[RMDB]
RNA sequence: GGGAACGACUCGAGUAGAGUCGAAAACCUACUCAAUACGUCCUCGUCGUACAGAACGGUAACAUGUUUUCCGAACAUCCGCGCUUGGGGAUACGAGUAUACACCUUACCCAACCCUCGCCAACGGGAGUGCAUCCACGAGUUCGCUCGUGGAUGAAGAACCAACGUUUGUUCGCAAACGUUGGUUCAAAAGAAACAACAACAACAAC
Reactivity to 2A3 in 0.01 (KOAc 150mM, MgCl2 10mM, bicine 150mM(pH8.5), 24C), signal-to-noise 2, nucleotides 027 to 156: c020c020u010a030c010u000c030a070a130u100a210c130g060u040c000c000u000c000g090u020c070g000u110a020c130a050g030a160a040c000g040g010u070a040a010c000a160u150g040u060u040u040u000c020c010g020a030a020c010a080u010c030c000g060c020g020c070u130u190g020g000g010g010a030u060a070c080g020a000g040u010a040u010a010c030a130c050c010u110u200a090c010c010c070a050a040c000c000c000u080c070g040c090c070a060a050c060g000g030g000a060g030u030g000c010a000u000c000c000a000c000g020a000g000u070u050c150g060c200u010c000g010u000g000g000a000u000g000a000a000

This 207-nucleotide RNA was probed chemically with 2A3. The reactions ran in a buffer of 150 mM KOAc, 10 mM MgCl2 and 150 mM bicine (pH 8.5), at 24 C.